[RMDB]
RNA sequence: GGGAACGACUCGAGUAGAGUCGAAAAGUGUUAUCCGGACGGUAAUGAUAAACCGUUCUGCUCAGGUUCAGGCUCCGGCAGGCCUGACGGAUACUGAGUCCGAAUGCCGUUAUCAGAUGAGUGACCAAGGUUAUGCACAAUUCGUUGUGCAUAACCUAAAAGAAACAACAACAACAAC
Reactivity to 2A3 in 0.01 (KOAc 150mM, MgCl2 10mM, bicine 150mM(pH8.5), 24C), signal-to-noise 4, nucleotides 027 to 126: g020u010g020u140u070a060u080c040c000g020g010a000c010g020g050u100a190a060u200g190a150u130a070a130a040c020c010g020u020u000c010u010g030c000u000c020a020g080g040u150u020c000a010g020g000c000u040c070c030g050g000c020a030g010g000c010c000u000g000a010c010g000g000a090u150a250c010u040g010a010g020u010c020c030g110a140a070u040g010c010c000g020u050u080a130u130c040a010g050a120u070g050a030g060u040g030a050c030c000a050
Reactivity to DMS in 0.01 (KOAc 150mM, MgCl2 10mM, bicine 150mM(pH8.5), 24C), signal-to-noise 3, nucleotides 027 to 126: g030u010g030u010u000a060u030c080c050g000g000a090c040g000g000u000a080a070u010g000a250u030a100a100a050c130c010g010u000u000c030u010g040c040u000c010a030g010g020u020u000c020a030g010g010c010u010c040c030g020g020c080a120g000g010c020c010u020g000a000c110g000g010a110u020a210c020u020g000a040g020u010c060c050g000a090a030u000g000c050c020g010u030u000a040u000c100a070g010a180u020g010a090g000u000g010a150c040c030a140